[RMDB]
RNA sequence: GGGAACGACUCGAGUAGAGUCGAAAAUCGAGUGUGAUCGUGAACUCGAGUUCGAACUCGAGUACGAUCGUGAUCUCGAGUGAGAACUCACUCGAGAGAGUGAGUACGUUCUCACGUGAUCACACACUCACUCUCUCGUACGUGUACGUGUGUACUCCAGCCGUUGAUUAUUCGUAAUCAACGGCUGAAAAGAAACAACAACAACAAC
Reactivity to 2A3 in 0.01 (KOAc 150mM, MgCl2 10mM, bicine 150mM(pH8.5), 24C), signal-to-noise 3, nucleotides 027 to 156: u080c020g000a000g000u040g010u060g020a000u010c020g020u050g140a110a080c010u000c010g000a050g000u170u290c190g100a230a100c010u010c000g000a000g000u020a020c030g060a040u010c020g000u060g020a060u040c010u000c010g030a020g010u100g020a060g010a020a000c030u000c060a030c000u030c040g010a020g010a000g000a000g010u010g000a010g000u020a050c070g040u090u020c050u040c040a030c120g050u080g030a040u050c000a010c000a000c000a000c060u010c030a000c020u020c000u000c000u000c010g000u050a050c110g000u040g010u040a040c060g070u120g000u040g040u210a050c020u010c030
Reactivity to DMS in 0.01 (KOAc 150mM, MgCl2 10mM, bicine 150mM(pH8.5), 24C), signal-to-noise 1, nucleotides 027 to 156: u000c000g000a090g050u000g030u020g010a000u010c000g000u000g060a100a070c000u000c020g000a020g090u000u000c240g000a100a200c030u000c020g030a040g050u000a020c000g020a040u000c040g060u000g000a110u010c010u000c030g010a040g000u010g000a100g040a090a120c100u000c000a110c210u000c010g020a130g020a080g010a000g000u000g010a040g030u000a060c130g000u010u020c030u000c000a110c220g050u000g000a050u030c060a090c080a150c050a080c020u020c010a070c010u000c000u000c010u000c010g000u000a060c080g010u000g020u000a060c040g010u010g000u020g030u000a000c040u000c030

An RNA of 207 nucleotides, treated with 2A3 and DMS and read out base by base.
The RNA was probed in 150 mM KOAc, 10 mM MgCl2 and 150 mM bicine (pH 8.5) at 24 C.
For DMS the reverse transcriptase was MarathonRT.
Reactivities are given for positions 27 through 156.
2A3 adducts were read by reverse transcription with SuperScript II with manganese.